[RMDB]
An RNA of 207 nucleotides, treated with DMS and 2A3 and read out base by base. DMS adducts were read by reverse transcription with MarathonRT.
RNA sequence: GGGAACGACUCGAGUAGAGUCGAAAAAGCGUAGCGGUACGCCGCUACGCAAGGCGCAUUUGAACUGUAUUGUACGCCUUGCAUAAAGCAAAAGUGCUAAAAAAACGUGCCGUUACGACGGCACGAAAAAACAUCCAUUGGUUCGCCAAUGGAUGAACAAUUAAUAGUACUUCGGUACUAUUAAUUGAAAAGAAACAACAACAACAAC
Reactivity to DMS in 0.01 (KOAc 150mM, MgCl2 10mM, bicine 150mM(pH8.5), 24C), signal-to-noise 3, nucleotides 027 to 156: a070g020c000g030u000a010g020c020g050g010u000a090c240g040c010c000g030c010u000a010c020g000c000a000a000g010g020c020g030c010a060u000u000u020g020a100a180c080u010g010u000a280u070u000g020u000a020c030g010c000c020u000u000g000c020a130u000a060a080a100g020c070a040a060a070a160g010u000g000c000u020a000a000a080a100a120a070a130c010g020u000g010c000c000g000u000u000a140c270g000a120c000g000g020c010a000c000g000a000a010a060a050a080a050c000a000u000c000c000a030u000u000g010g000u000u000c290g020c020c000a020a000u000g010g000a000u000g000a040a080
Reactivity to 2A3 in 0.01 (KOAc 150mM, MgCl2 10mM, bicine 150mM(pH8.5), 24C), signal-to-noise 6, nucleotides 027 to 156: a000g040c010g000u000a000g010c010g000g010u040a040c210g040c020c000g020c000u000a000c000g000c000a000a000g000g000c020g000c020a070u090u090u230g140a180a120c130u130g070u240a110u150u100g050u070a050c030g000c010c000u000u030g000c010a030u100a120a120a050g030c040a050a020a040a050g090u100g040c060u180a100a060a020a010a020a000a010c020g000u000g000c000c000g000u020u050a060c260g000a010c000g030g000c050a000c000g000a010a000a000a000a000a000c000a000u000c000c000a000u000u000g010g020u010u040c130g020c070c000a000a000u000g000g000a000u000g000a010a000
For DMS, 6,593 sequencing reads were counted.